[RMDB]
RNA sequence: GGGAACGACUCGAGUAGAGUCGAAAAGAUCUUUGAUUUAGAAAGGGCACUCUGGCCACAGCCUGGAGGAUAGGAUAGAGACAGAAAGACCAGUUGGAAUACUAUUAGCAUAUUAGUGUGGUCCAGGACUACCCGGAACAUUCGUGUUCCGGGUAGUAAAAGAAACAACAACAACAAC
Reactivity to DMS in 0.01 (KOAc 150mM, MgCl2 10mM, bicine 150mM(pH8.5), 24C), signal-to-noise 3, nucleotides 027 to 126: g000a050u010c020u020u000u020g010a090u040u010u020a080g000a090a120a140g020g000g000c040a090c060u010c000u010g000g020c000c020a040c090a060g010c040c010u000g010g020a070g000g000a080u010a010g010g000a100u010a090g000a110g010a090c050a090g000a060a100a110g000a130c080c080a070g010u030u010g030g000a150a080u020a030c030u000a060u010u020a190g000c120a050u000a070u010u020a050g020u000g020u000g010g000u010c000c050a040g020g000
Reactivity to 2A3 in 0.01 (KOAc 150mM, MgCl2 10mM, bicine 150mM(pH8.5), 24C), signal-to-noise 2, nucleotides 027 to 126: g150a030u060c060u100u110u120g110a110u110u220u170a190g150a130a000a060g010g000g000c030a010c020u000c000u000g020g000c000c010a020c000a000g060c010c000u010g020g010a010g010g080a140u030a050g120g000a010u010a030g140a040g050a060c030a030g180a080a080a030g090a060c000c060a060g020u060u010g060g090a050a020u030a030c020u020a030u240u120a030g010c070a110u060a080u160u130a090g000u000g000u000g040g000u010c020c020a000g000g000
The data come from the RNA Mapping Database (RMDB), library OK1LIB. The record gives the reactivity of an RNA of 177 nucleotides to DMS and 2A3. For DMS the reverse transcriptase was MarathonRT. For 2A3 the reverse transcriptase was SuperScript II with manganese. The reactions ran in a buffer of 150 mM KOAc, 10 mM MgCl2 and 150 mM bicine (pH 8.5), at 24 C.